RNA sequence: GGGAACGACUCGAGUAGAGUCGAAAAACCGGAGGCCGACAAUCCAGGGAACCGGAUGUCAUCACGUUGUUGCAGUGCCAGAUGGCAUCUUAAAUCCGAUCUGCAAAUAAGCAUGUAGAAAGCUGAUAAAAUCACACACACUUCGGUGUGUGUGAAAGUGAUAUCAUACGUUCGCGUAUGAUAUCACAAAAGAAACAACAACAACAAC
Reactivity to 2A3 in 0.01 (KOAc 150mM, MgCl2 10mM, bicine 150mM(pH8.5), 24C), signal-to-noise 2, nucleotides 027 to 156: a000c040c000g000g050a040g010g030c030c020g030a070c110a050a070u040c000c050a030g040g070g000a090a050c030c020g000g010a000u000g030u010c010a030u000c040a020c180g070u060u050g000u020u030g010c040a070g050u040g100c030c030a000g010a040u040g000g000c000a010u000c000u010u040a070a130a020u010c050c010g020a090u040c010u040g000c000a010a080a100u080a190a020g030c070a020u150g010u100a060g080a090a080a000g040c060u040g030a040u140a050a140a020a040u020c000a000c000a000c000a000c000a000c010u030u010c100g070g000u000g000u000g000u010g000u000g000a000a000a000
Reactivity to DMS in 0.01 (KOAc 150mM, MgCl2 10mM, bicine 150mM(pH8.5), 24C), signal-to-noise 1, nucleotides 027 to 156: a020c020c020g000g000a100g010g030c040c000g020a060c070a110a140u010c060c040a130g020g030g000a140a110c060c080g020g000a030u000g000u020c000a060u000c030a230c220g050u000u000g000u000u010g010c030a070g030u000g000c010c030a170g010a040u010g010g000c010a000u000c000u000u030a100a060a140u000c080c020g000a110u000c010u000g000c030a040a030a100u000a000a120g030c000a130u020g020u010a100g010a120a040a090g010c040u000g010a140u010a050a060a080a130u000c000a000c000a000c000a000c000a010c000u010u000c280g080g000u010g000u000g010u000g010u000g000a000a040a060

Conditions: 150 mM KOAc, 10 mM MgCl2 and 150 mM bicine (pH 8.5), 24 C. Chemical mapping of a 207-nucleotide RNA with 2A3 and DMS. DMS adducts were read by reverse transcription with MarathonRT. As a SHAPE reagent, 2A3 marks flexible, mostly unpaired nucleotides at the ribose 2'-OH.